[RMDB]
RNA sequence: GGGAACGACUCGAGUAGAGUCGAAAAGAUAUGGAAUCAAGCAACAGCAAUGACAUCGGAAACGAUGUAUUGACAUGCUUGGUUCCUAAGUCAAAUCUACCAGACAGCUUCGGCUGUCUGGUAGAAAGGAAAGAAUGGAGUUCGCUCCAUUCUUUCCAAAAGAAACAACAACAACAAC
Reactivity to 2A3 in 0.01 (KOAc 150mM, MgCl2 10mM, bicine 150mM(pH8.5), 24C), signal-to-noise 2, nucleotides 027 to 126: g020a010u040a010u060g010g010a000a000u000c000a000a000g010c000a000a240c070a270g160c020a020a030u160g250a140c010a020u000c000g050g000a030a010a020c010g010a000u010g030u030a000u010u000g100a150c070a100u020g000c000u000u000g000g000u000u000c000c000u000a020a010g020u030c000a010a000a240u000c000u000a000c000c000a000g010a010c000a000g050c040u160u250c300g180g000c010u000g000u010c000u000g020g000u000a000g010a000a000a000
Reactivity to DMS in 0.01 (KOAc 150mM, MgCl2 10mM, bicine 150mM(pH8.5), 24C), signal-to-noise 2, nucleotides 027 to 126: g010a010u000a140u000g000g000a030a000u010c000a000a020g000c020a040a140c300a170g010c010a000a010u020g000a020c000a000u000c000g000g000a050a050a090c000g010a010u000g000u000a020u000u000g010a100c120a130u000g010c000u000u000g000g000u000u000c000c000u000a010a090g000u000c020a100a130a130u000c000u000a010c010c000a030g000a010c010a010g020c000u000u020c170g000g000c000u000g010u000c000u000g000g000u000a000g000a020a050a060